An RNA of 177 nucleotides, treated with DMS and 2A3 and read out base by base.
The 2A3 profile rests on 2,567 reads.
The reactions ran in a buffer of 150 mM KOAc, 10 mM MgCl2 and 150 mM bicine (pH 8.5), at 24 C.
Reactivities are given for positions 27 through 126.
Source: RMDB library OK2TRN, as collected in RNAgym.
RNA sequence: GGGAACGACUCGAGUAGAGUCGAAAAGGGCGACUGCCGUUCCCGGUCAUGCACGUCGACACCGGUCACAACUUCGACGAAGUUAUCGCUACCCGAGACGAGUUGGUCGCCGCGGCCGGGGUGCGGCCACGCAUUCCUGGUUCGCCAGGAAUGCGUGAAAAGAAACAACAACAACAAC
Reactivity to DMS in 0.01 (KOAc 150mM, MgCl2 10mM, bicine 150mM(pH8.5), 24C), signal-to-noise 3, nucleotides 027 to 126: g000g010g010c040g020a070c120u000g010c020c010g000u000u000c010c000c000g020g010u010c050a090u010g000c070a130c050g010u000c020g010a040c080a100c090c050g020g010u010c130a210c110a070a070c060u010u010c010g010a180c130g000a070a080g020u000u010a080u010c120g000c050u020a150c160c020c010g000a130g010a120c070g000a050g000u000u000g020g010u000c020g010c050c020g010c030g000g000c000c000g000g010g000g010u000g010c020g000g010c040
Reactivity to 2A3 in 0.01 (KOAc 150mM, MgCl2 10mM, bicine 150mM(pH8.5), 24C), signal-to-noise 2, nucleotides 027 to 126: g040g010g000c030g020a070c080u080g000c020c000g030u050u030c040c000c000g010g010u040c030a030u130g040c080a000c070g040u000c020g010a040c010a060c090c070g100g000u120c050a010c020a100a050c070u100u050c030g230a130c090g000a100a030g070u020u190a130u150c080g010c080u060a070c010c030c000g040a040g030a070c030g020a030g200u090u100g110g000u060c020g030c030c000g030c000g010g000c000c000g000g010g000g000u100g000c000g040g000c020